[RMDB]
RNA sequence: GGGAACGACUCGAGUAGAGUCGAAAAAACCCUGGCCGGGGUUGAAGCGUUAAAACUAAGCGGCCUCGCCUUUAUUUACCGUGUUUGUCCGGGACUUAAAGGUUAAUUAAAUGACAAUACUAAGCAUGUAGUACCGACGGUCGAGGCUUUUCGGACGGUACCCUAUUAUGUUCGCAUAAUAGGGUACAAAAGAAACAACAACAACAAC
Reactivity to 2A3 in 0.01 (KOAc 150mM, MgCl2 10mM, bicine 150mM(pH8.5), 24C), signal-to-noise 1, nucleotides 027 to 156: a010a020c000c010c010u000g000g060c020c000g060g000g030g030u040u030g070a090a060g050c060g040u110u200a040a030a120a160c080u070a170a000g120c030g010g000c000c000u000c050g030c000c010u050u020u020a020u000u000u000a000c000c000g000u010g030u040u040u080g030u050c010c010g000g010g000a010c000u000u000a020a000a000g010g000u020u060a020a010u070u020a010a000a010u070g010a000c010a030a000u090a170c040u060a090a000g050c010a040u090g040u120a020g000u010a120c010c010g020a020c020g060g020u050c020g030a010g020g040c090u060u050u040u050c010g040g030a020c060g030
Reactivity to DMS in 0.01 (KOAc 150mM, MgCl2 10mM, bicine 150mM(pH8.5), 24C), signal-to-noise 1, nucleotides 027 to 156: a050a070c010c010c000u010g020g020c030c040g070g000g040g010u000u000g020a110a140g000c030g010u000u010a080a120a150a110c080u000a100a100g030c050g010g050c000c010u000c040g010c020c010u000u020u000a010u000u000u000a020c000c010g020u010g030u010u000u000g000u000c080c000g000g000g000a040c070u000u000a000a000a020g010g010u000u000a040a060u000u010a030a050a070u000g010a050c060a110a080u000a060c080u000a070a130g030c080a110u000g020u000a050g020u000a010c040c010g000a080c070g020g020u000c020g010a030g020g020c020u000u010u000u000c030g010g000a140c180g010